[RMDB]
Notes: An RNA of 207 nucleotides, treated with 2A3 and read out base by base. The RNA was probed in 150 mM KOAc, 10 mM MgCl2 and 150 mM bicine (pH 8.5) at 24 C. For 2A3 the reverse transcriptase was SuperScript II with manganese. Values are in units of 0.01, from 0 to 300, in steps of 10. The data come from the RNA Mapping Database (RMDB), library M2RFPK.
RNA sequence: GGGAACGACUCGAGUAGAGUCGAAAACUCCACGCUGCGUAAUGGACGACGGCGGCGUGUGGCGAACAGGGAUACCGGUAGUCAGUGUCUGGAACAUCCCAAGGGGCGGCGGAGCUAGCACCCCGACAAAACGGGCACAAGUUCGCUUGUGCCCGAACGAUGAGCUUCAGUUCGCUGAAGCUCAUCGAAAAGAAACAACAACAACAAC
Reactivity to 2A3 in 0.01 (KOAc 150mM, MgCl2 10mM, bicine 150mM(pH8.5), 24C), signal-to-noise 1, nucleotides 027 to 156: c000u060c000c010a040c000g020c010u000g160c000g060u070a040a140u240g160g060a120c160g000a000c000g070g170c020g020g000c010g000u020g020u010g020g040c120g010a110a030c040a080g070g010g000a010u050a030c010c000g010g110u130a050g100u120c040a030g110u020g030u170c040u060g000g040a030a030c000a050u000c050c010c010a130a120g000g000g000g000c020g010g000c030g030g090a060g130c030u040a000g000c060a020c010c000c000c000g000a000c010a000a120a000a010c020g000g000g030c000a000c000a000a000g010u030u020c080g020c000u000u010g020u000g000c000c010c010g000a000a000